Conditions: 150 mM KOAc, 10 mM MgCl2 and 150 mM bicine (pH 8.5), 24 C. An RNA of 177 nucleotides, treated with DMS and 2A3 and read out base by base. The 2A3 profile rests on 1,484 reads. For 2A3 the reverse transcriptase was SuperScript II with manganese. Source: RMDB library OK2TST, as collected in RNAgym.
[RMDB]
RNA sequence: GGGAACGACUCGAGUAGAGUCGAAAAGUGACGCAGGAAGGUAGUCCAUCCCGGGCGGUGGUUGUCCCGGGGUAAGGGUGUAGGACGUUGUCCAGGUAAAUCCGGGCAGCACAUAGUCUGAGACCUGCAGGAGAAACUGUUUCGACAGUUUCUCCUGAAAAGAAACAACAACAACAAC
Reactivity to DMS in 0.01 (KOAc 150mM, MgCl2 10mM, bicine 150mM(pH8.5), 24C), signal-to-noise 3, nucleotides 027 to 126: g020u010g000a110c070g000c050a060g020g000a100a110g010g010u000a070g020u020c040c030a090u000c000c010c010g000g000g020c300g000g010u000g010g000u010u000g000u010c000c000c000g030g020g000g020u000a030a100g010g010g020u000g020u000a170g000g000a040c050g020u000u000g020u000c010c000a050g030g000u000a030a070a120u010c020c010g000g000g000c020a020g010c040a090c190a170u000a150g010u000c020u000g000a180g000a080c020c010u000g010
Reactivity to 2A3 in 0.01 (KOAc 150mM, MgCl2 10mM, bicine 150mM(pH8.5), 24C), signal-to-noise 1, nucleotides 027 to 126: g070u010g000a020c040g000c040a010g000g130a070a000g070g010u110a030g030u050c040c040a070u000c010c000c000g020g010g000c060g080g010u150g040g130u050u070g040u070c000c010c000g020g040g010g000u050a030a030g030g010g000u030g000u000a030g000g040a000c020g000u020u000g000u000c030c050a050g000g040u060a130a100a070u100c000c000g000g000g010c000a020g070c000a010c020a090u170a000g000u000c010u020g000a010g020a060c000c030u020g010